About this RNA
The record gives the reactivity of an RNA of 177 nucleotides to DMS and 2A3. Reactivities are given for positions 27 through 126. Conditions: 150 mM KOAc, 10 mM MgCl2 and 150 mM bicine (pH 8.5), 24 C. The DMS profile rests on 869 reads. 2A3 adducts were read by reverse transcription with SuperScript II with manganese.
RNA sequence: GGGAACGACUCGAGUAGAGUCGAAAAUAGAUCGAUGAAGCUGCACCGACGCUUCAGAGUGUUCAUCGUUGAUGAAUGGGUCGGCAGUAUCGUACUCGCCGACAUCUUCGAAAGGGUCAUCGCAGUCGACUUGCUGCUGUUUCGACAGCAGCAAGUCAAAAGAAACAACAACAACAAC
Reactivity to DMS in 0.01 (KOAc 150mM, MgCl2 10mM, bicine 150mM(pH8.5), 24C), signal-to-noise 1, nucleotides 027 to 126: u020a120g050a070u000c120g010a050u000g020a040a100g040c010u000g000c020a210c250c200g040a040c030g010c040u000u010c100a080g010a080g010u000g010u000u010c000a020u000c020g000u000u020g000a020u000g030a000a010u010g000g030g100u000c000g000g000c010a030g000u000a120u010c190g050u000a030c040u010c110g060c000c000g020a000c050a050u010c000u000u000c000g000a190a040a060g000g000g000u000c010a150u010c280g010c020a100g000u010c070
Reactivity to 2A3 in 0.01 (KOAc 150mM, MgCl2 10mM, bicine 150mM(pH8.5), 24C), signal-to-noise 2, nucleotides 027 to 126: u190a030g130a100u070c090g060a010u100g070a100a040g000c020u040g010c020a050c110c080g080a030c020g100c150u000u010c020a010g000a000g040u160g020u040u010c010a020u040c150g300u180u300g000a010u000g000a040a040u060g120g090g000u000c000g010g000c030a010g010u040a050u260c060g020u070a020c010u050c070g010c000c000g010a000c020a000u000c000u080u050c010g020a070a070a000g060g020g000u000c010a000u090c080g000c060a010g010u080c050